[RMDB]
RNA sequence: GGGAACGACUCGAGUAGAGUCGAAAAGAUAUGGAAUACGGCGAUAAGCUGGUGUCGGAAACGACAUUUCAGCUUUUGACGCGGUAUUCCUAAGUCAAAGGGCCAUUUGCUUCGGCAAAUGGCCCAACAACAUUAGAGGGUUCGCCCUCUAAUGUUGAAAAGAAACAACAACAACAAC
Reactivity to DMS in 0.01 (KOAc 150mM, MgCl2 10mM, bicine 150mM(pH8.5), 24C), signal-to-noise 2, nucleotides 027 to 126: g000a020u000a240u010g000g000a030a000u000a010c000g000g030c000g010a140u010a040a030g020c010u000g000g020u000g000u000c000g010g010a060a050a140c000g010a020c000a010u000u010u010c010a000g030c000u000u000u000u010g000a170c030g010c000g010g000u000a010u010u000c000c000u000a010a040g000u000c030a060a110a150g010g000g020c000c000a010u000u000u000g000c000u010u020c220g020g000c000a000a000a000u000g010g010c000c000c010a000a020
Reactivity to 2A3 in 0.01 (KOAc 150mM, MgCl2 10mM, bicine 150mM(pH8.5), 24C), signal-to-noise 2, nucleotides 027 to 126: g010a010u020a010u080g000g010a010a010u020a020c060g290g010c010g060a130u070a300a070g000c010u020g000g040u000g000u010c000g010g000a030a000a000c010g010a000c000a010u080u140u110c010a010g000c040u020u080u050u240g070a020c000g000c060g010g000u000a000u000u000c000c000u000a010a000g010u000c010a040a050a190g020g000g000c040c010a020u040u020u010g000c050u060u100c300g080g000c030a020a030a000u010g030g020c000c000c010a000a000
An RNA of 177 nucleotides, treated with DMS and 2A3 and read out base by base. For 2A3, 4,726 sequencing reads were counted. Reactivities are given for positions 27 through 126. The DMS profile rests on 5,400 reads.